[RMDB]
RNA sequence: GGGAACGACUCGAGUAGAGUCGAAAACGAUCAGCGAGCUGGACGUGACGCCGACCGCUAUGAUCGCGAAUACUCCGUAGAGCCAUACUUGCCACCCGAGCGGAAUCGGCAUGCCCAGGCCGUGGGCCAGGAGGCGACGGUUCGCCGUCGCCUCCUGAAAAGAAACAACAACAACAAC
Reactivity to 2A3 in 0.01 (KOAc 150mM, MgCl2 10mM, bicine 150mM(pH8.5), 24C), signal-to-noise 1, nucleotides 027 to 126: c030g010a040u000c000a000g040c000g090a070g060c070u080g000g000a100c090g180u100g030a120c030g040c000c000g020a070c030c030g050c030u100a080u300g040a000u020c000g000c000g100a100a000u090a070c080u000c100c040g090u080a000g090a000g000c000c020a020u060a100c000u050u030g030c000c000a040c020c040c000g070a010g000c040g170g060a000a140u030c010g000g000c030a040u160g020c040c000c000a130g020g110c000c150g000u100g000g060g020c000

Description
Structure probing data (2A3) for a 177-nucleotide construct. The reactions ran in a buffer of 150 mM KOAc, 10 mM MgCl2 and 150 mM bicine (pH 8.5), at 24 C. Reactivities are given for positions 27 through 126. The 2A3 profile rests on 480 reads.